[RMDB]
An RNA of 170 nucleotides, treated with DMS and 2A3 and read out base by base. DMS adducts were read by reverse transcription with MarathonRT. The data come from the RNA Mapping Database (RMDB), library 15KLIB. The reactions ran in a buffer of 150 mM KOAc, 10 mM MgCl2 and 150 mM bicine (pH 8.5), at 24 C.
RNA sequence: GGGAACGACUCGAGUAGAGUCGAAAACCUUCGAGGGGGUUCACACCCCCAACCGGCGGGCCGGCUGCUCUUCUUUCCCUUCUCUCGUCUUCCUCGGUCAACCUCUUGAGUUCCCCUUCUUCCUCCUACAGGAGCUGCUUCGGCAGCUCCAAAAGAAACAACAACAACAAC
Reactivity to DMS in 0.01 (KOAc 150mM, MgCl2 10mM, bicine 150mM(pH8.5), 24C), signal-to-noise 2, nucleotides 027 to 129: c030c000u050u040c170g030a170g040g100g040g040g090u120u000c240a160c150a120c050c010c000c000c040a050a040c110c100g070g020c070g010g010g030c040c020g040g010c070u000g030c030u020c080u040u050c030u000u020u020c000c000c000u050u010c000u010c020u010c030g030u030c020u040u000c060c010u050c030g000g000u040c030a070a170c070c010u030c000u000u050g020a090g020u010u000c000c010c010c120u000u000c000u000u030c030c000u040c030c010u060a050c040a060
Reactivity to 2A3 in 0.01 (KOAc 150mM, MgCl2 10mM, bicine 150mM(pH8.5), 24C), signal-to-noise 4, nucleotides 027 to 129: c020c000u010u040c110g080a180g020g000g000g000g010u140u140c010a070c010a000c020c010c010c000c000a000a010c000c010g080g010c040g030g010g040c010c050g040g000c030u060g040c000u020c030u090u020c020u040u070u080c010c010c000u020u010c040u010c010u010c000g010u010c020u120u040c020c010u020c010g000g010u040c050a050a040c010c010u010c070u060u070g010a010g030u000u020c000c000c000c000u060u000c000u050u010c000c020u050c000c000u040a060c030a040